[RMDB]
Structure probing data (2A3 and DMS) for a 177-nucleotide construct. The data come from the RNA Mapping Database (RMDB), library OK2TRN. Values cover nucleotides 27 to 126.
RNA sequence: GGGAACGACUCGAGUAGAGUCGAAAAGGUCGCCGAACGUCGUGAACUGCAGCUUGUCCGGUGCAGGUGCCGUCGGGUCGUUGGCGAGCCGCGCCUGCUCCUGGUCGAGCACGAGGGAACCCUGGGACUCGCUUAGAUAGUUCGCUAUCUAAGCGAGAAAAGAAACAACAACAACAAC
Reactivity to 2A3 in 0.01 (KOAc 150mM, MgCl2 10mM, bicine 150mM(pH8.5), 24C), signal-to-noise 2, nucleotides 027 to 126: g040g010u040c010g000c070c030g020a080a040c020g030u050c030g030u060g090a090a050c030u030g020c050a040g020c000u030u040g010u000c000c000g020g000u030g000c010a000g000g040u000g060c050c020g100u100c030g040g020g060u090c060g120u130u150g080g140c080g000a040g050c000c010g010c000g020c000c030u010g000c010u010c020c040u110g090g000u050c010g010a010g000c040a020c050g020a050g040g010g020a040a030c020c000c000u010g030g020g030a060
Reactivity to DMS in 0.01 (KOAc 150mM, MgCl2 10mM, bicine 150mM(pH8.5), 24C), signal-to-noise 3, nucleotides 027 to 126: g000g010u000c020g020c010c020g010a060a100c110g020u000c040g030u000g010a090a120c060u000g000c090a110g010c020u000u000g000u000c020c020g010g010u000g000c010a010g000g010u010g020c100c120g000u010c050g010g010g020u010c050g010u000u010g010g010c050g000a070g000c070c100g010c020g020c010c010u000g010c010u000c050c000u010g050g000u010c030g000a010g020c020a080c100g000a070g000g010g000a080a080c040c020c020u000g010g000g010a300